[RMDB]
The record gives the reactivity of an RNA of 207 nucleotides to 2A3.
The 2A3 profile rests on 487 reads.
RNA sequence: GGGAACGACUCGAGUAGAGUCGAAAAGAGGCGAAAUAAUUCCCAUCUCCUAUGUACGGCCGGAGAUGGGUAUGGCCGUACUAAUAAGCCUCAUAGUGACGAGAGUCACGAAUUCUGGAUAGCCUUUGGUAGUCGGCUAUCCUAUGACUACCGUAGACCACUCAUCAGGAUUCGUCCUGAUGAGUGGAAAAGAAACAACAACAACAAC
Reactivity to 2A3 in 0.01 (KOAc 150mM, MgCl2 10mM, bicine 150mM(pH8.5), 24C), signal-to-noise 1, nucleotides 027 to 156: g000a000g000g000c050g080a040a000a150u180a000a060u080u000c000c000c000a020u000c230u000c000c020u110a070u080g020u010a000c000g030g010c030c000g000g040a020g040a220u200g080g010g060u130a040u060g010g010c010c000g000u000a020c000u000a000a020u040a120a000g000c000c020u010c010a060u140a060g000u020g000a040c040g010a000g000a000g170u000c000a030c010g000a300a030u100u010c090u160g000g000a020u000a030g020c000c000u070u060u120g090g000u200a090g020u070c050g120g000c040u110a140u100c000c000u020a130u060g020a020c020u000a000c030c000g060u040a010g020a110